[RMDB]
RNA sequence: GGGAACGACUCGAGUAGAGUCGAAAACGUGCACGCGUACUCGCCCGAGGAGCUCACGCAGCUGGUCCUCGGAAUUGGUGCAGGUACGUCGAGCGAAAGCGAUCAUCUGACUCUCUAGAGAAGGAUCAUCUGGCGGCUCGGUAGAUUUCUCCGAGAGAUAAUUCGUUCUGUUCGCAGAACGAAUUAUAAAAGAAACAACAACAACAAC
Reactivity to 2A3 in 0.01 (KOAc 150mM, MgCl2 10mM, bicine 150mM(pH8.5), 24C), signal-to-noise 2, nucleotides 027 to 156: c010g040u040g000c050a010c080g080c020g010u070a040c020u020c090g010c000c030c000g000a000g030g010a050g030c050u090c100a170c130g150c070a050g020c050u120g050g120u040c000c020u020c000g010g080a020a050u180u190g070g000u040g000c000a020g040g010u020a020c010g000u030c020g050a020g000c030g090a140a050a010g050c020g020a010u010c010a000u010c030u020g020a040c000u020c000u040c130u170a080g000a010g000a040a010g030g010a010u020c010a020u010c020u060g140g030c010g010g000c010u000c010g000g020u050a090g020a150u030u040u050c050u000c010c020g030a050g010a010g010
Reactivity to DMS in 0.01 (KOAc 150mM, MgCl2 10mM, bicine 150mM(pH8.5), 24C), signal-to-noise 2, nucleotides 027 to 156: c040g010u010g000c050a100c090g040c020g010u000a030c020u000c050g000c000c000c000g000a100g020g000a040g000c060u000c040a180c160g040c060a110g020c050u000g010g000u000c000c010u000c020g040g020a040a020u000u010g030g060u000g040c000a040g000g030u000a010c030g020u000c020g020a300g000c000g020a080a060a080g010c120g020a070u000c050a080u000c020u030g020a300c020u000c010u000c130u000a140g000a050g000a080a280g010g010a040u000c020a030u000c010u000g020g040c050g000g000c030u010c020g050g000u000a100g000a240u000u000u000c030u000c010c000g020a130g010a150g010